An RNA of 177 nucleotides, treated with 2A3 and DMS and read out base by base. The data come from the RNA Mapping Database (RMDB), library OK1LIB. The RNA was probed in 150 mM KOAc, 10 mM MgCl2 and 150 mM bicine (pH 8.5) at 24 C.

RNA sequence: GGGAACGACUCGAGUAGAGUCGAAAAUGGAGUUGAAGACAGUAACGACUGCGAGGAAACAGGAAACACAUAUGACAGAUCUCUUGUGGUUGAUGACGAGGAGACGUCCAUCCUUCUGUAUGACAUAUCUGUUAGGUUUGUUCGCAAACCUAACAGAAAAAGAAACAACAACAACAAC
Reactivity to 2A3 in 0.01 (KOAc 150mM, MgCl2 10mM, bicine 150mM(pH8.5), 24C), signal-to-noise 2, nucleotides 027 to 126: u090g040g020a020g000u010u090g030a080a060g100a040c050a010g010u000a140a020c010g070a000c000u030g000c050g000a000g030g030a060a070a000c000a000g000g200a000a170a000c140a010c060a100u160a030u200g060a020c050a000g080a120u000c070u050c000u060u060g010u070g010g000u050u030g030a180u020g000a020c060g010a010g030g050a050g000a000c000g090u140c030c000a080u020c030c000u080u030c030u050g120u040a140u230g040a000c000a020u160a020
Reactivity to DMS in 0.01 (KOAc 150mM, MgCl2 10mM, bicine 150mM(pH8.5), 24C), signal-to-noise 3, nucleotides 027 to 126: u010g000g010a180g020u000u020g030a050a150g040a090c050a040g000u010a050a060c150g000a030c050u000g000c000g000a030g000g030a040a090a050c140a030g010g000a050a080a100c150a070c200a090u030a060u020g030a090c080a020g000a140u020c020u020c050u000u000g010u000g030g000u000u000g030a130u000g000a020c050g010a050g020g000a150g010a040c050g000u000c030c030a070u000c030c030u000u040c110u000g000u020a060u030g010a150c140a040u010a150